[RMDB]
RNA sequence: GGGAACGACUCGAGUAGAGUCGAAAAUCGCAGGCCACGGGUGAAGAAGAAAGUCCGUACCUGCUCGGCCCGGAGUGAGGAGGAGCCCCCGGCAGAGGAGGUGACCCCAGACGAGGUGAUCCAGGCGCGUGCAUAGGACUUUCGAGUCCUAUGCACGAAAAGAAACAACAACAACAAC
Reactivity to 2A3 in 0.01 (KOAc 150mM, MgCl2 10mM, bicine 150mM(pH8.5), 24C), signal-to-noise 2, nucleotides 027 to 126: u110c010g000c010a040g000g050c050c110a010c020g010g000g000u070g010a030a080g090a070a000g130a100a120a020g010u000c000c000g000u000a030c000c000u000g010c010u040c020g050g020c000c010c010g000g000a030g010u090g020a070g000g000a060g020g000a020g000c000c000c000c000c000g010g000c020a030g020a090g100g050a020g020g000u070g060a180c000c000c010c030a030g010a060c050g030a030g030g050u050g010a070u010c030c000a010g000g060c050g000
Reactivity to DMS in 0.01 (KOAc 150mM, MgCl2 10mM, bicine 150mM(pH8.5), 24C), signal-to-noise 2, nucleotides 027 to 126: u100c080g000c000a000g000g000c040c130a030c010g010g000g000u000g010a000a120g020a170a080g000a120a190a160g010u010c000c020g010u000a300c030c000u000g030c000u000c060g000g050c060c000c020g010g010a020g030u010g000a160g020g020a130g010g010a300g000c070c080c000c000c070g000g020c050a140g000a110g000g000a050g000g000u020g000a250c080c000c010c050a040g000a140c050g030a000g030g000u030g000a130u000c100c060a100g000g020c010g000